[RMDB]
The data come from the RNA Mapping Database (RMDB), library OK1LIB. This 177-nucleotide RNA was probed chemically with DMS and 2A3. The DMS profile rests on 1,469 reads. 2A3 adducts were read by reverse transcription with SuperScript II with manganese. The reactions ran in a buffer of 150 mM KOAc, 10 mM MgCl2 and 150 mM bicine (pH 8.5), at 24 C.
RNA sequence: GGGAACGACUCGAGUAGAGUCGAAAACAAAACUGACCACCUAUGAGGUCAUACAUCGUCAUAGGAAAACAAAACAAAACUGACCAGAUAUGAGGUCAUACAUCGUCAUAUCAAACAAAACAACAAAAGGAUGAUAUGGAUUCGUCCAUAUCAUCCUAAAAGAAACAACAACAACAAC
Reactivity to DMS in 0.01 (KOAc 150mM, MgCl2 10mM, bicine 150mM(pH8.5), 24C), signal-to-noise 2, nucleotides 027 to 126: c090a180a070a130a260c290u000g020a020c000c030a060c010c010u000a000u000g000a050g000g000u070c000a130u000a110c210a020u020c170g000u000c000a020u000a000g000g000a300a140a090a020c140a060a110a210a140c270a120a050a060a020c300u000g030a120c000c000a300g000a000u000a000u000g000a000g000g030u000c000a050u000a030c210a030u090c040g000u000c000a000u000a000u030c020a120a070a060c070a000a010a090a060c130a050a070c150a040a150a050
Reactivity to 2A3 in 0.01 (KOAc 150mM, MgCl2 10mM, bicine 150mM(pH8.5), 24C), signal-to-noise 4, nucleotides 027 to 126: c020a000a040a020a080c070u070g000a000c000c000a000c010c010u000a010u000g010a000g010g000u020c020a000u210a070c100a100u180c180g050u020c000a000u000a010g020g000a010a030a000a050c020a010a030a010a000c090a030a090a010a160c120u060g000a000c000c010a000g000a010u000a010u010g000a010g010g010u010c020a000u160a040c050a050u120c170g030u000c000a000u000a000u020c000a000a010a040c060a030a030a020a000c100a030a010c030a000a130a000